[RMDB]
Chemical mapping of a 177-nucleotide RNA with DMS and 2A3. High DMS reactivity at an A or C suggests that its Watson-Crick edge is free. The reactions ran in a buffer of 150 mM KOAc, 10 mM MgCl2 and 150 mM bicine (pH 8.5), at 24 C. The DMS profile rests on 4,315 reads. For DMS the reverse transcriptase was MarathonRT.
RNA sequence: GGGAACGACUCGAGUAGAGUCGAAAAAUAGGAACAUCUAUCGUGUUACAACCACGAGUAACACCUGAACAGGCGACUUUGAUCAACCUGUACAGAAAUGCACAUGCCGAUUUCAUCUGGAUAGUGCUCGCAAUUGUUAAUUCGUUAACAAUUGCGAAAAAGAAACAACAACAACAAC
Reactivity to DMS in 0.01 (KOAc 150mM, MgCl2 10mM, bicine 150mM(pH8.5), 24C), signal-to-noise 5, nucleotides 027 to 126: a080u010a050g010g020a130a100c170a090u000c060u000a040u010c160g000u000g010u010u000a010c050a070a200c100c030a210c130g000a090g000u000a020a010c020a020c020c020u000g000a100a020c020a000g000g020c220g010a090c160u000u000u020g000a110u000c100a110a090c000c010u010g020u000a100c000a010g000a070a060a080u010g030c010a020c040a060u010g000c020c020g000a040u000u020u000c210a040u000c040u000g040g010a030u010a110g000u000g010c040
Reactivity to 2A3 in 0.01 (KOAc 150mM, MgCl2 10mM, bicine 150mM(pH8.5), 24C), signal-to-noise 4, nucleotides 027 to 126: a000u120a040g050g070a100a080c040a150u090c050u120a080u130c060g000u000g010u040u020a040c030a130a110c030c030a050c030g040a030g010u000a000a020c000a010c000c000u010g010a020a000c000a010g010g000c020g070a030c070u270u230u280g080a210u200c010a040a100c010c000u000g030u060a000c000a010g060a020a130a050u120g010c010a000c010a000u250g070c010c010g030a000u050u240u180c090a090u000c060u070g000g030a020u060a090g010u010g010c000